[RMDB]
RNA sequence: GGGAACGACUCGAGUAGAGUCGAAAAGCCACAUAUCCCGUGACAUUGCGAAAGCAAGGCUGGCGGUAGGAAGUCCUGGGCGGCGACAGCCUUGGACUGCGGCGUAAAGGUGUACCUGGGGCCGUUAUAACGCGGUAACAGUUCGCUGUUACCGCAACUUACACCAACUGUUCGCAGUUGGUGUAAGAAAAGAAACAACAACAACAAC
Reactivity to DMS in 0.01 (KOAc 150mM, MgCl2 10mM, bicine 150mM(pH8.5), 24C), signal-to-noise 2, nucleotides 027 to 156: g000c020c020a140c050a140u000a130u000c050c000c020g030u000g010a120c010a140u020u000g000c010g010a140a110a270g010c000a050a040g000g040c050u000g020g030c060g010g000u000a080g030g000a220a070g010u000c020c010u000g000g000g010c010g030g010c030g010a090c080a150g000c010c000u000u010g020g010a030c000u000g030c010g000g010c060g070u000a100a110a090g000g020u010g010u000a130c050c030u020g000g000g020g000c030c010g060u020u000a100u000a080a160c110g000c010g000g000u000a020a000c000a020g000u000u010c160g000c000u010g000u010u000a000c010c010g030c000a000a000
Reactivity to 2A3 in 0.01 (KOAc 150mM, MgCl2 10mM, bicine 150mM(pH8.5), 24C), signal-to-noise 2, nucleotides 027 to 156: g040c020c000a010c020a040u080a060u020c000c000c000g030u040g000a030c110a190u050u080g010c010g080a140a040a030g000c000a010a040g020g030c090u050g040g000c030g010g000u060a060g040g090a060a000g020u010c020c020u050g000g000g000c010g040g050c090g040a030c050a010g000c000c000u010u030g000g010a000c010u000g010c000g000g000c000g000u040a070a020a020g000g040u150g060u100a130c010c010u010g000g010g110g000c000c000g010u040u020a130u050a140a070c150g000c000g000g010u000a000a000c000a000g030u070u090c130g050c070u000g010u010u000a000c000c000g010c000a000a000
An RNA of 207 nucleotides, treated with DMS and 2A3 and read out base by base. For DMS the reverse transcriptase was MarathonRT. It was measured as part of the RMDB library M2RFPK. High 2A3 reactivity points to a flexible backbone, as in loops and unpaired stretches. The DMS profile rests on 3,051 reads.